This 207-nucleotide RNA was probed chemically with 2A3 and DMS. For DMS the reverse transcriptase was MarathonRT. The reactions ran in a buffer of 150 mM KOAc, 10 mM MgCl2 and 150 mM bicine (pH 8.5), at 24 C. Source: RMDB library M2RFPK, as collected in RNAgym. The DMS profile rests on 2,741 reads. In probing experiments dimethyl sulfate is read out at A N1 and C N3, which are open when not base-paired.
RNA sequence: GGGAACGACUCGAGUAGAGUCGAAAAGCCGAUGAAUUGCCGAGAAGCCUGGCUCGAAAUCGUCGACGCAUCGACGAAGGUCCUGCCAUGAGACCGUAACGAGGACAUGUCGCCUCGAAUGGCGUCGUAUAACAUGAGUGGUUCGCCACUCAUGUAAACGAAUGCUCAGAUUCGUCUGAGCAUUCGUAAAAGAAACAACAACAACAAC
Reactivity to 2A3 in 0.01 (KOAc 150mM, MgCl2 10mM, bicine 150mM(pH8.5), 24C), signal-to-noise 3, nucleotides 027 to 156: g020c000c000g000a040u100g020a110a220u210u090g080c060c010g030a020g040a120a030g030c050c080u080g040g010c050u060c080g100a140a080a040u030c010g000u010c000g000a040c130g030c170a100u050c000g000a010c010g010a020a020g000g000u000c000c010u040g030c000c000a010u000g030a030g010a100c010c020g040u080a010a010c000g020a000g000g020a050c040a120u280g010u160c050g000c020c020u000c000g010a000a000u000g000g030c000g020u040c020g020u060a070u030a170a000c000a000u000g000a010g010u010g060g020u050u050c170g050c030c000a000c000u000c000a000u000g000u000a030a000
Reactivity to DMS in 0.01 (KOAc 150mM, MgCl2 10mM, bicine 150mM(pH8.5), 24C), signal-to-noise 1, nucleotides 027 to 156: g010c010c010g030a090u000g000a110a120u010u000g050c050c010g040a100g000a070a090g020c110c090u010g000g000c000u010c050g010a070a110a060u000c000g030u010c020g040a060c160g050c100a140u000c010g010a010c000g010a080a120g000g020u000c010c000u000g000c020c030a120u000g010a070g010a040c000c030g020u000a020a060c060g000a040g000g020a080c020a160u010g000u000c120g000c000c000u000c030g030a050a070u000g010g010c000g060u000c000g000u030a130u020a090a050c000a070u000g010a000g040u010g000g000u020u000c300g020c060c000a010c000u000c020a000u000g020u010a010a050